[RMDB]
RNA sequence: GGGAACGACUCGAGUAGAGUCGAAAAGAUAUGGAUGUGGCAAUUCCGUACAGGCGACGAAGAUCGCACUAGAAUCGGAAACGAUUCUAGUGCGAUCAGAGCCUUAACGGAAGCCACAUCCUAAGUCCUACAUUGCAGUGUUCGCACUGCAAUGUAGAAAAGAAACAACAACAACAAC
Reactivity to DMS in 0.01 (KOAc 150mM, MgCl2 10mM, bicine 150mM(pH8.5), 24C), signal-to-noise 3, nucleotides 027 to 126: g000a140u000a300u020g020g010a010u000g020u000g000g010c010a150a170u000u000c000c010g040u010a190c300a040g000g010c000g000a150c300g000a130a090g000a010u010c000g020c000a000c000u010a010g000a020a000u000c000g000g010a110a090a220c000g000a030u000u010c000u000a010g010u000g000c000g010a000u000c000a000g000a210g000c000c010u000u000a150a020c000g000g010a020a050g000c000c000a010c000a000u000c000c000u000a010a070g010u010c010
Reactivity to 2A3 in 0.01 (KOAc 150mM, MgCl2 10mM, bicine 150mM(pH8.5), 24C), signal-to-noise 2, nucleotides 027 to 126: g000a010u150a070u230g010g000a000u000g040u040g030g000c080a300a300u110u010c020c000g020u000a070c120a140g020g000c050g000a300c020g000a300a010g000a020u010c010g110c020a000c000u000a000g050a010a000u000c000g000g060a030a110a100c030g010a010u000u000c000u000a000g000u000g070c000g010a030u010c010a000g000a010g020c000c000u000u070a110a030c020g010g000a010a000g010c000c000a000c000a000u020c010c000u000a010a000g000u020c000
The record gives the reactivity of an RNA of 177 nucleotides to DMS and 2A3.
Reactivities are given for positions 27 through 126.
Conditions: 150 mM KOAc, 10 mM MgCl2 and 150 mM bicine (pH 8.5), 24 C.
It was measured as part of the RMDB library TTRINS.
2A3 adducts were read by reverse transcription with SuperScript II with manganese.